[RMDB]
Structure probing data (DMS and 2A3) for a 177-nucleotide construct.
Conditions: 150 mM KOAc, 10 mM MgCl2 and 150 mM bicine (pH 8.5), 24 C.
DMS adducts were read by reverse transcription with MarathonRT.
It was measured as part of the RMDB library TTRDEL.
RNA sequence: GGGAACGACUCGAGUAGAGUCGAAAAGAUAUGGAGCCGAUGAACUACAGCCCUUUCGGAAACGAAUGUGUAGGAUAGGCUGCAUCCGGCUCCUAAGUCAAAACGCAGUGUGUUCGCACACUGCGAAUCAUAUUCUCAGCUUCGGCUGAGAAUAUGAAAAAGAAACAACAACAACAAC
Reactivity to DMS in 0.01 (KOAc 150mM, MgCl2 10mM, bicine 150mM(pH8.5), 24C), signal-to-noise 2, nucleotides 027 to 126: g000a040u000a300u010g000g000a010g010c010c020g000a110u000g000a080a070c090u020a140c010a030g000c010c020c060u000u010u000c010g000g000a110a090a100c020g010a050a070u010g010u000g010u000a200g010g010a070u000a080g000g000c000u000g010c030a030u000c040c040g040g010c010u000c000c010u000a010a090g010u000c020a030a030a090a220c060g010c000a000g010u000g010u000g010u000u010c260g010c020a000c010a000c010u000g000c000g000a020a030
Reactivity to 2A3 in 0.01 (KOAc 150mM, MgCl2 10mM, bicine 150mM(pH8.5), 24C), signal-to-noise 3, nucleotides 027 to 126: g010a010u030a010u090g010g010a010g030c020c050g010a030u020g010a080a110c090u160a040c260a020g000c010c000c010u000u060u000c030g050g100a220a030a020c050g090a300a140u300g080u050g100u250a060g050g100a060u060a060g060g000c000u020g000c000a000u040c100c080g000g000c000u000c000c010u000a000a030g000u010c030a000a030a070a060c020g000c000a000g000u000g010u010g040u080u180c300g040c130a000c000a000c000u020g000c000g000a000a000